[RMDB]
RNA sequence: GGGAACGACUCGAGUAGAGUCGAAAAUCUCCGUGAUUCGUCACGGAGAAACAUAAAUAAAAUGGGUUCAACUCCCACCGUUUUCCGAGGGUAUCGGAAACCAACCUUCGCUCUUCGGAGCGAAGAAGAUAGGUCUACACUUCGGUGUAGACCUAUCAAAAGAAACAACAACAACAAC
Reactivity to DMS in 0.01 (KOAc 150mM, MgCl2 10mM, bicine 150mM(pH8.5), 24C), signal-to-noise 1, nucleotides 027 to 126: u000c000u000c000c000g010u000g010a030u000u000c240g000u000c000a010c000g010g000a000g000a030a060a030c070a170u080a070a080a070u030a030a040a050a110u000g010g000g000u000u000c190a110a300c150u000c000c000c010a060c070c070g020u000u000u000u000c020c000g010a000g000g010g000u000a080u010c000g010g010a050a000a030c220c030a070a020c140c010u000u000c000g030c000u010c010u000u020c200g000g000a020g000c000g000a000a010g020a040a030
Reactivity to 2A3 in 0.01 (KOAc 150mM, MgCl2 10mM, bicine 150mM(pH8.5), 24C), signal-to-noise 2, nucleotides 027 to 126: u010c020u000c000c000g000u010g030a030u020u090c200g000u000c110a000c010g000g000a000g020a000a000a000c000a010u240a070a090a010u250a060a150a060a060u080g020g020g010u080u120c040a040a020c060u020c040c000c000a020c000c020g000u000u030u120u000c000c000g000a020g040g040g080u200a100u030c010g020g000a000a000a000c010c020a020a070c000c010u020u000c020g030c010u000c000u020u090c200g080g000a000g000c010g000a010a000g000a000a010
An RNA of 177 nucleotides, treated with DMS and 2A3 and read out base by base. For DMS, 789 sequencing reads were counted. It was measured as part of the RMDB library M2PK50. 2A3 adducts were read by reverse transcription with SuperScript II with manganese. Values are in units of 0.01, from 0 to 300, in steps of 10. The RNA was probed in 150 mM KOAc, 10 mM MgCl2 and 150 mM bicine (pH 8.5) at 24 C.